[RMDB]
Conditions: 150 mM KOAc, 10 mM MgCl2 and 150 mM bicine (pH 8.5), 24 C. Chemical mapping of a 207-nucleotide RNA with DMS and 2A3. The 2A3 profile rests on 629 reads.
RNA sequence: GGGAACGACUCGAGUAGAGUCGAAAAGACUGUCAUUAGGUAACAUAAGCAUCACUUGGGGAAGCUACUCUGCCUGUGCUGUCAAGUAAGAGAUUCCCUUCCAUGCUGCCCCCUCCACGCAUUUCAAAGCUGAAUAGCUCAGAUUUGGGGCAGGCAGCCCCCAAUCCAUAUUCGUAUGGAUUGGGGGAAAAGAAACAACAACAACAAC
Reactivity to DMS in 0.01 (KOAc 150mM, MgCl2 10mM, bicine 150mM(pH8.5), 24C), signal-to-noise 1, nucleotides 027 to 156: g010a060c050u000g000u000c040a010u010u010a050g030g000u000a050a170c030a100u030a100a170g000c000a070u010c070a050c040u000u000g010g040g000g000a260a160g000c040u010a050c060u000c090u000g000c000c000u020g020u010g030c020u000g000u000c010a120a130g000u000a070a110g000a090g010a300u010u000c000c010c000u010u010c040c000a140u000g000c000u000g000c000c020c020c020c030u010c030c030a100c110g000c060a140u000u010u010c070a030a010a090g000c000u000g010a080a220u010a110g000c020u010c030a210g010a040u000u000u010g010g000g060g030c020a040g060g010c020a130g010
Reactivity to 2A3 in 0.01 (KOAc 150mM, MgCl2 10mM, bicine 150mM(pH8.5), 24C), signal-to-noise 2, nucleotides 027 to 156: g000a000c010u020g080u290c010a040u110u300a030g020g000u040a050a030c020a140u220a270a070g040c030a010u120c060a030c190u180u260g050g000g000g090a040a030g070c000u100a020c040u060c030u040g000c000c040u000g000u010g030c030u000g000u030c040a010a140g120u120a230a010g030a010g010a270u010u000c000c000c000u000u000c110c000a070u020g000c000u000g000c040c000c000c030c000u000c000c020a070c090g030c010a000u000u100u120c120a130a230a070g000c020u040g000a110a100u030a220g010c000u020c040a010g010a110u040u110u150g010g000g000g020c000a010g000g040c000a010g000